An RNA of 207 nucleotides, treated with DMS and 2A3 and read out base by base.
It was measured as part of the RMDB library M2RFPK.
For DMS the reverse transcriptase was MarathonRT.
Values cover nucleotides 27 to 156.
As a SHAPE reagent, 2A3 marks flexible, mostly unpaired nucleotides at the ribose 2'-OH.

[RMDB]
RNA sequence: GGGAACGACUCGAGUAGAGUCGAAAAACUCCUAUUCCAACACGUCCUCGUCGUACAGAGUGGUAACAUGUGUUACCACAUAUCCAAGCUUGGGUACACGGGCUUGACCCAACCCCUUGGGCGGAUGAAAACCAGAUUACGUUCGCGUAAUCUGGAAUCUUAAUAGAUGGUUCGCCAUCUAUUAAGAAAAAGAAACAACAACAACAAC
Reactivity to DMS in 0.01 (KOAc 150mM, MgCl2 10mM, bicine 150mM(pH8.5), 24C), signal-to-noise 2, nucleotides 027 to 156: a060c060u010c010c030u010a110u000u010c020c020a080a120c070a160c030g010u000c010c000u000c020g020u000c020g010u020a100c090a140g010a190g050u020g000g010u000a010a010c010a200u000g040u000g010u010u000a020c000c010a010c010a010u000a080u000c020c000a090a300g000c090u000u000g020g040g060u000a050c060a050c050g010g040g030c040u010u000g010a140c020c010c000a100a070c030c000c030c010u000u010g010g000g020c270g010g000a140u000g000a110a050a110a180c000c000a020g010a020u010u000a010c000g050u000u010c280g060c010g020u000a000a020u010c000u020g020g000a000a000
Reactivity to 2A3 in 0.01 (KOAc 150mM, MgCl2 10mM, bicine 150mM(pH8.5), 24C), signal-to-noise 5, nucleotides 027 to 156: a000c060u040c040c000u040a090u090u030c030c030a100a050c030a040c090g060u040c000c050u090c050g090u050c030g050u110a090c060a090g150a050g120u000g000g000u010a020a010c050a140u300g170u110g000u170u000a000c000c000a010c010a010u040a000u000c000c000a000a010g030c030u020u030g010g000g010u010a000c030a030c060g000g000g000c030u120u150g150a300c000c000c000a000a070c000c000c000c000u000u010g000g010g000c000g000g000a020u030g060a040a060a020a050c000c000a010g000a000u000u000a000c010g020u040u070c200g000c010g090u000a000a000u000c000u000g000g000a000a010

Conditions: 150 mM KOAc, 10 mM MgCl2 and 150 mM bicine (pH 8.5), 24 C.